The record gives the reactivity of an RNA of 177 nucleotides to DMS.
RNA sequence: GGGAACGACUCGAGUAGAGUCGAAAAGAUAUGGAUGGAUCGCUAGCCUGAGGGUUCGGAAACGAACCGCAGGGCUUGGACCGAGUCCAUCCUAAGUCAAAGAAAUGGCUCUUCGGAGCCAUUUCAACCACUUCAGGAUGUUCGCAUCCUGAAGUGGAAAAGAAACAACAACAACAAC
Reactivity to DMS in 0.01 (KOAc 150mM, MgCl2 10mM, bicine 150mM(pH8.5), 24C), signal-to-noise 1, nucleotides 027 to 126: g020a050u000a230u010g000g000a010u000g010g000a140u000c030g020c020u000a010g050c000c000u000g000a300g010g010g000u030u010c010g000g000a110a050a180c000g030a000a000c000c000g000c090a300g000g010g020c040u000u010g000g010a040c300c020g000a050g000u000c010c000a000u000c000c010u000a020a090g000u020c060a040a130a160g000a010a000a010u010g010g000c000u000c000u000u020c260g020g000a020g000c000c000a000u000u000u000c000a080a170
The data come from the RNA Mapping Database (RMDB), library TTRDEL. The RNA was probed in 150 mM KOAc, 10 mM MgCl2 and 150 mM bicine (pH 8.5) at 24 C.